An RNA of 177 nucleotides, treated with 2A3 and DMS and read out base by base. For 2A3, 1,444 sequencing reads were counted. The RNA was probed in 150 mM KOAc, 10 mM MgCl2 and 150 mM bicine (pH 8.5) at 24 C. It was measured as part of the RMDB library M2PK50. Reactivities are given for positions 27 through 126.

RNA sequence: GGGAACGACUCGAGUAGAGUCGAAAACGCGGGUGGUUCGCCACCCGCGAAAUAAGAAUAUAGUGUUACUGAUCAACACUUUAAUCAAAGAUGAGAAUAAAAAAACGGUCUACUUCGGUAGACCGAAUCAUAAGACUUACUUCGGUAAGUCUUAUGAAAAAGAAACAACAACAACAAC
Reactivity to 2A3 in 0.01 (KOAc 150mM, MgCl2 10mM, bicine 150mM(pH8.5), 24C), signal-to-noise 2, nucleotides 027 to 126: c000g000c020g010g070g000u050g040g050u100u100c180g020c110c000a000c000c000c000g000c000g010a000a000a000u040a020a030g030a070a050u300a080u250a240g010u000g000u030u010a110c030u080g020a050u030c020a000a040c010a020c020u160u120u020a000a020u070c050a080a020a060g020a010u090g090a030g070a120a100u240a170a130a090a020a000a010a010c000g000g000u000c000u000a000c020u020u060c220g090g000u000a000g000a000c010c000g000a000a000
Reactivity to DMS in 0.01 (KOAc 150mM, MgCl2 10mM, bicine 150mM(pH8.5), 24C), signal-to-noise 1, nucleotides 027 to 126: c030g070c020g010g050g080u010g000g000u000u010c240g020c000c000a000c000c020c000g040c020g010a010a010a040u000a130a180g000a170a090u050a120u030a020g000u000g000u000u000a120c080u000g000a060u000c030a020a000c000a000c000u000u000u000a030a030u000c070a050a060a220g010a020u010g000a050g020a300a080u050a010a010a090a050a050a030a070c010g000g000u000c000u000a010c000u000u010c110g000g000u000a010g020a000c000c010g000a000a010